[RMDB]
RNA sequence: GGGAACGACUCGAGUAGAGUCGAAAAGAUAUGGAUUCACGGGAGUGUCCCUUCGGAAACGAAGGGUACACGAGGAUCGUGAUCCUAAGUCAAAAUCCCUGAAGUUGGUUCGCCAACUUCAGGGAAACAUCUUAUAGAUGUUCGCAUCUAUAAGAUGAAAAGAAACAACAACAACAAC
Reactivity to 2A3 in 0.01 (KOAc 150mM, MgCl2 10mM, bicine 150mM(pH8.5), 24C), signal-to-noise 5, nucleotides 027 to 126: g010a010u050a020u090g020g000a030u290u290c010a000c010g000g010g000a040g010u000g000u000c000c000c000u000u000c000g000g010a050a030a040c010g000a010a010g000g000g020u060a010c000a000c010g000a050g010g010a020u010c000g000u010g000a000u000c000c000u010a070a020g010u010c030a000a030a050a300u030c000c000c000u000g000a010a000g000u010u020g060g030u060u210c300g080c110c010a000a000c000u000u000c000a000g000g000g010a020a000a000
Reactivity to DMS in 0.01 (KOAc 150mM, MgCl2 10mM, bicine 150mM(pH8.5), 24C), signal-to-noise 1, nucleotides 027 to 126: g000a030u000a290u010g000g000a020u000u010c010a010c000g000g000g000a040g020u000g010u000c000c000c000u000u000c000g010g000a050a060a100c000g010a010a000g000g000g000u010a000c000a010c000g000a120g000g000a060u010c010g010u000g000a050u000c000c010u000a020a130g000u000c020a080a080a140a150u010c000c000c000u000g000a010a000g010u000u000g000g010u000u020c260g020c000c000a000a010c000u000u000c000a000g010g000g000a000a010a080